[RMDB]
RNA sequence: GGGAACGACUCGAGUAGAGUCGAAAAGAUAUGGAUUGGCUUUUGACGAUGACCAUCGGAAACGAUGGAGAACAUCGAUAAGCCGGGUCCUAAGUCAAAGAGAUUUAAAGUUCGCUUUAAAUCUCAACAGACGAUGUUAGUUCGCUAACAUCGUCUGAAAAGAAACAACAACAACAAC
Reactivity to 2A3 in 0.01 (KOAc 150mM, MgCl2 10mM, bicine 150mM(pH8.5), 24C), signal-to-noise 1, nucleotides 027 to 126: g020a020u070a010u080g000g000a020u000u050g030g000c030u170u070u050u210g300a230c130g020a010u030g060a150c000c000a010u040c010g020g000a020a040a000c010g000a010u030g100g000a010g040a020a010c000a000u010c050g180a070u000a020a000g000c000c050g010g040g020u020c000c010u020a110a000g020u020c000a000a090a190g000a020g000a000u040u000u010a030a020a010g040u050u050c120g040c110u040u020u000a010a010a010u040c010u000c020a000a000
Reactivity to DMS in 0.01 (KOAc 150mM, MgCl2 10mM, bicine 150mM(pH8.5), 24C), signal-to-noise 3, nucleotides 027 to 126: g010a050u010a220u010g000g010a020u000u010g000g020c000u000u000u000u010g020a180c130g020a020u000g000a170c000c000a000u000c000g010g000a060a080a080c010g020a020u000g000g000a090g000a110a140c010a010u000c000g010a090u000a010a030g000c000c000g000g010g000u000c010c020u000a050a150g000u000c010a060a060a110g010a010g010a030u010u000u000a000a020a000g000u000u000c250g010c000u020u000u000a010a000a030u000c000u000c010a060a140